[RMDB]
RNA sequence: GGGAACGACUCGAGUAGAGUCGAAAAUGAGCAUAACCACAAUCAUGAUCACAUCCAUAAAUACAAUGAAAAAUGCGACCAUGAAAGCAUAAGUCUCCAGAAUUUAGACAAUGAUCAUCACUGUCAUCAUCACCAUGAAAAUCAUAAUAUGCAUGGAGCUGCGGCUCCGCUUCGGCGGAGCCGCAGCAAAAGAAACAACAACAACAAC
Reactivity to 2A3 in 0.01 (KOAc 150mM, MgCl2 10mM, bicine 150mM(pH8.5), 24C), signal-to-noise 2, nucleotides 027 to 156: u140g000a020g080c000a030u040a080a080c020c000a010c050a020a100u030c010a030u030g000a010u070c030a010c010a040u010c060c040a030u080a050a100a010u270a090c130a070a090u130g160a000a180a070a000a000u020g000c010g000a010c020c010a020u040g000a030a090a000g010c000a000u000a030a060g060u050c000u040c040c010a030g040a100a070u050u150u100a080g000a030c020a020a120u090g030a040u090c070a020u030c020a040c050u030g010u030c010a000u050c000a000u110c000a030c010c000a000u020g020a000a130a030a000u120c060a010u050a120a050u150a130u130g010c010a010u010g000g000a020